Annotation
An RNA of 177 nucleotides, treated with 2A3 and DMS and read out base by base.

RNA sequence: GGGAACGACUCGAGUAGAGUCGAAAAGAUAUGGAGCAUGAUUGACAUGCCACGAUUCGGAAACGAAUCGAAUGGCAACAGCAAUAUGCUCCUAAGUCAAACACCUGUGUGUUCGCACACAGGUGAAGGAACUAUAUCUCUUCGGAGAUAUAGUUCCAAAAGAAACAACAACAACAAC
Reactivity to 2A3 in 0.01 (KOAc 150mM, MgCl2 10mM, bicine 150mM(pH8.5), 24C), signal-to-noise 6, nucleotides 027 to 126: g000a000u020a010u060g000g020a000g010c000a000u040g080a090u300u020g050a120c220a250u300g010c020c000a010c000g000a010u000u000c000g010g000a050a010a010c020g010a000a030u020c030g050a200a260u070g020g000c070a180a110c100a190g010c000a000a010u010a010u020g010c000u000c010c010u000a010a000g010u000c010a070a110a080c010a010c010c000u000g020u000g000u000g010u030u110c300g020c220a000c000a000c000a000g020g000u010g000a010a010
Reactivity to DMS in 0.01 (KOAc 150mM, MgCl2 10mM, bicine 150mM(pH8.5), 24C), signal-to-noise 3, nucleotides 027 to 126: g000a020u000a040u010g000g010a020g020c010a000u000g010a050u010u000g010a050c080a190u020g020c000c000a080c000g020a010u010u000c010g010g000a020a020a010c000g000a030a000u000c000g010a050a110u010g030g010c000a120a130c180a130g000c000a010a010u000a000u000g000c000u000c000c000u000a000a060g000u000c000a200a160a280c010a000c000c000u010g010u000g020u000g010u000u020c290g010c010a000c000a000c000a000g000g000u000g000a020a040
High DMS reactivity at an A or C suggests that its Watson-Crick edge is free. Values cover nucleotides 27 to 126. The reactions ran in a buffer of 150 mM KOAc, 10 mM MgCl2 and 150 mM bicine (pH 8.5), at 24 C.